RNA sequence: GGGAACGACUCGAGUAGAGUCGAAAAGUGUGCUAUACUAGUAAGGUUGAAUGAAUCAACCCUUGGUGCUUAGCUUCUUACACCAAGCAUAUUACACGCGGAUAACCGCCAAAGGAGAAAAGAUGAACUGCCCGACGAUUCUUCGGAAUCGUCGGAACUAUGACAUACUCUUCGGAGUAUGUCAUAGAAAAGAAACAACAACAACAAC
Reactivity to 2A3 in 0.01 (KOAc 150mM, MgCl2 10mM, bicine 150mM(pH8.5), 24C), signal-to-noise 6, nucleotides 027 to 156: g030u030g010u010g040c050u070a050u050a250c060u090a090g120u120a130a050g020g010u020u020g020a080a150u140g070a080a160u070c010a010a000c000c000c000u000u010g000g000u020g000c050u060u060a050g040c000u060u050c020u080u090a010c010a000c000c000a000a000g010c030a030u020a050u140u140a040c060a010c040g020c010g010g000a090u070a240a110c020c030g010c050c060a100a070a010g070g020a070g040a020a130a030a010g090a070u140g050a080a070c050u110g040c010c000c010g000a000c000g000a000u000u000c010u010u060c210g050g000a000a000u000c000g000u000c000g000g000a000a000
Reactivity to DMS in 0.01 (KOAc 150mM, MgCl2 10mM, bicine 150mM(pH8.5), 24C), signal-to-noise 2, nucleotides 027 to 156: g040u020g010u000g030c020u000a080u000a090c050u030a110g020u000a090a100g010g010u000u000g010a050a140u020g000a150a200u000c000a000a030c000c000c010u000u010g000g020u000g030c080u000u000a100g030c140u000u000c040u000u010a080c000a030c000c010a050a030g000c040a100u000a070u010u000a030c040a070c060g000c010g000g000a130u010a090a110c040c020g010c050c020a030a040a140g020g000a130g010a090a080a070a100g010a110u000g000a090a110c060u010g000c040c010c010g000a030c000g000a010u000u000c000u000u010c300g020g020a030a000u000c010g030u000c010g000g010a000a020